Structure probing data (DMS and 2A3) for a 177-nucleotide construct. Reactivities are rounded to 0.1 and cut off at 0 and 3. For 2A3 the reverse transcriptase was SuperScript II with manganese. The DMS profile rests on 2,920 reads.
RNA sequence: GGGAACGACUCGAGUAGAGUCGAAAAGUGAGGUGAUGUAUUGUCCUGAUAUAGGGUACCAGUAUAAUAUAAAGACUAUCAAGAGCACCAGGGCGUGCGAGAAUACUGUGUAUGACAUAGACGGCCCCCAAUAAACCGUGUUCGCACGGUUUAUUGGAAAAGAAACAACAACAACAAC
Reactivity to DMS in 0.01 (KOAc 150mM, MgCl2 10mM, bicine 150mM(pH8.5), 24C), signal-to-noise 4, nucleotides 027 to 126: g030u010g020a100g030g000u000g010a110u000g000u010a050u000u010g000u000c010c000u010g000a180u010a040u010a110g010g000g010u010a030c040c010a040g000u010a020u010a070a060u000a130u010a100a080a110g000a140c110u030a110u010c110a080a130g010a280g010c030a020c030c020a210g000g020g010c130g020u000g010c010g010a080g020a090a080u010a050c020u000g030u010g020u000a040u000g010a100c100a070u010a040g010a180c190g010g000c010c030c030
Reactivity to 2A3 in 0.01 (KOAc 150mM, MgCl2 10mM, bicine 150mM(pH8.5), 24C), signal-to-noise 2, nucleotides 027 to 126: g120u050g030a040g010g040u060g010a120u070g020u080a060u080u100g050u020c010c000u030g110a100u060a010u090a180g100g000g020u010a050c000c000a000g050u040a020u020a130a150u100a000u020a100a240a060g080a040c070u080a080u190c100a080a010g050a030g140c000a030c050c040a060g110g240g000c120g000u030g010c000g010a080g070a090a010u020a090c000u010g000u000g010u120a070u050g040a060c030a030u040a010g070a010c040g090g000c040c020c010
The RNA was probed in 150 mM KOAc, 10 mM MgCl2 and 150 mM bicine (pH 8.5) at 24 C.